Structure probing data (2A3 and DMS) for a 177-nucleotide construct. Values cover nucleotides 27 to 126. Conditions: 150 mM KOAc, 10 mM MgCl2 and 150 mM bicine (pH 8.5), 24 C. Source: RMDB library M2PK50, as collected in RNAgym.
RNA sequence: GGGAACGACUCGAGUAGAGUCGAAAACUCAAUGACUUCGGUCAUUGAGAAAGGACAAAAGUCCAACUGAGCAGCUAUGACCUCAUACAUCGUCAUAGCAAAAAACACACACGUUCGCGUGUGUGAACGAGCAUUAUACCUUCGGGUAUAAUGCUCGAAAAGAAACAACAACAACAAC
Reactivity to 2A3 in 0.01 (KOAc 150mM, MgCl2 10mM, bicine 150mM(pH8.5), 24C), signal-to-noise 1, nucleotides 027 to 126: c000u000c010a010a000u000g000a000c010u010u030c210g080g000u040c000a000u000u010g000a010g020a050a030a010g000g000a030c020a060a300a070a020g020u010c020c010a050a050c070u020g000a000g020c070a020g000c120u010a020u000g000a010c000c000u060c080a110u100a200c070a090u140c040g000u020c010a030u070a000g000c020a000a000a000a010a040a000c020a000c000a000c000a000c000g020u040u040c300g010c000g060u010g020u010g010u020g010a010a010
Reactivity to DMS in 0.01 (KOAc 150mM, MgCl2 10mM, bicine 150mM(pH8.5), 24C), signal-to-noise 1, nucleotides 027 to 126: c000u000c000a030a000u000g000a010c000u010u040c130g000g010u020c000a000u020u000g000a000g000a020a040a070g010g000a000c000a070a060a040a270g000u010c000c000a070a240c300u000g000a020g020c290a090g030c000u000a000u010g010a020c000c000u000c040a040u000a140c140a090u020c120g000u000c020a000u000a000g000c050a000a080a010a040a030a010c000a010c000a000c000a010c000g000u000u020c180g040c010g010u000g000u010g020u000g000a010a130